Chemical mapping of a 177-nucleotide RNA with DMS. The reactions ran in a buffer of 150 mM KOAc, 10 mM MgCl2 and 150 mM bicine (pH 8.5), at 24 C. For DMS the reverse transcriptase was MarathonRT. The data come from the RNA Mapping Database (RMDB), library RFMREP.
RNA sequence: GGGAACGACUCGAGUAGAGUCGAAAACUUGAUAGUCUAUGAUGAAUGACACCAAGAGUUGGCUGAUGGCAACAUGAAAGGACACGUGCAAGACCUGAAAAGGUCACUUGUAGGGCACGCAGACGCAGAUAUGCGCUCAGUUCGCUGAGCGCAUAUCAAAAGAAACAACAACAACAAC
Reactivity to DMS in 0.01 (KOAc 150mM, MgCl2 10mM, bicine 150mM(pH8.5), 24C), signal-to-noise 1, nucleotides 027 to 126: c030u000u000g040a040u000a060g020u000c020u050a140u010g030a170u010g020a210a070u020g000a020c030a070c060c020a020a090g000a040g000u010u000g020g000c050u000g000a070u000g040g000c070a020a070c030a080u000g000a020a030a080g010g000a190c080a070c040g010u000g020c070a110a080g020a040c010c000u010g000a150a060a180a030g000g000u000c060a020c140u030u000g000u000a140g000g000g020c030a040c070g000c070a050g010a070c130g020c160a120